RNA sequence: GGGAACGACUCGAGUAGAGUCGAAAAAAUACAGGCUCUCCCAUCCAACUCCUAUUCCAACACGUCCUCGUCGUACAGAGUGGUAACAUGUGUCACCACAUAUCCGAGCUUGGGUACACGGGCUUGAAAAAGUUAGAGCGCUUCGGCGCUCUAACAACCUAAGCAUAUUCUUCGGAAUAUGCUUAGGAAAAGAAACAACAACAACAAC
Reactivity to DMS in 0.01 (KOAc 150mM, MgCl2 10mM, bicine 150mM(pH8.5), 24C), signal-to-noise 1, nucleotides 027 to 156: a110a100u010a090c050a110g000g040c050u000c070u010c030c010c020a160u000c030c050a060a070c050u010c020c020u010a100u000u020c040c010a050a160c060a040c020g000u000c000c040u010c110g040u000c050g000u010a140c060a070g010a140g030u000g020g000u010a050a030c040a250u010g020u020g010u000c050a030c010c000a030c010a130u000a110u010c020c020g030a050g040c010u000u010g020g020g000u000a040c050a070c060g020g000g020c000u000u000g000a100a090a090a110a100g040u000u000a030g010a000g010c040g000c000u000u010c300g070g060c050g000c000u000c000u000a000a000c000a050a090
Reactivity to 2A3 in 0.01 (KOAc 150mM, MgCl2 10mM, bicine 150mM(pH8.5), 24C), signal-to-noise 3, nucleotides 027 to 156: a000a030u220a080c040a040g030g000c020u000c010u010c040c000c010a030u030c030c020a030a040c020u020c030c020u110a100u130u070c030c040a070a020c040a030c100g050u060c030c040u070c060g080u030c020g000u030a050c050a050g110a050g040u070g000g010u070a080a000c020a100u170g080u060g060u100c050a050c060c000a040c020a040u120a050u070c030c060g000a010g060c060u030u030g070g020g020u050a010c050a020c080g000g020g000c010u010u040g070a040a040a060a040a010g000u000u000a000g000a000g000c000g010c030u050u060c180g070g010c010g000c000u010c000u000a000a010c000a000a000